This 177-nucleotide RNA was probed chemically with DMS and 2A3.
DMS adducts were read by reverse transcription with MarathonRT.
For DMS, 2,263 sequencing reads were counted.
The RNA was probed in 150 mM KOAc, 10 mM MgCl2 and 150 mM bicine (pH 8.5) at 24 C.
[RMDB]
RNA sequence: GGGAACGACUCGAGUAGAGUCGAAAAUCACCAAACCAAUUGAACAGGAAGAAUGGUGCCACCAGCAGCUGGACAGCGCUACCUAUCAUGGGAGAUAUCUGCGGUAUGCCAGCGUCACCCAAAGGACCGUAAUUAGCACGUUCGCGUGCUAAUUACGAAAAGAAACAACAACAACAAC
Reactivity to DMS in 0.01 (KOAc 150mM, MgCl2 10mM, bicine 150mM(pH8.5), 24C), signal-to-noise 3, nucleotides 027 to 126: u020c050a120c040c020a100a120a170c100c060a090a120u010u030g020a080a190c090a080g000g000a130a090g000a080a080u010g010g010u000g010c100c040a120c040c030a070g000c060a080g000c040u000g060g000a090c050a110g000c050g000c030u000a050c030c000u010a090u010c150a110u010g000g010g020a120g000a010u000a030u020c060u000g000c050g030g010u000a070u000g000c030c020a030g000c130g000u000c080a090c020c000c030a020a100a120g010g010a120c170
Reactivity to 2A3 in 0.01 (KOAc 150mM, MgCl2 10mM, bicine 150mM(pH8.5), 24C), signal-to-noise 3, nucleotides 027 to 126: u050c000a040c020c000a000a020a060c040c010a050a110u100u130g050a130a030c050a100g040g040a050a030g050a050a110u070g010g000u010g010c020c000a030c000c000a020g020c030a020g040c020u000g000g030a060c010a040g020c020g030c030u040a050c000c000u120a130u280c070a090u220g130g000g000a090g030a040u200a070u080c080u040g000c000g050g090u060a050u180g050c000c000a020g000c010g020u010c000a070c010c000c030a080a080a040g100g020a010c040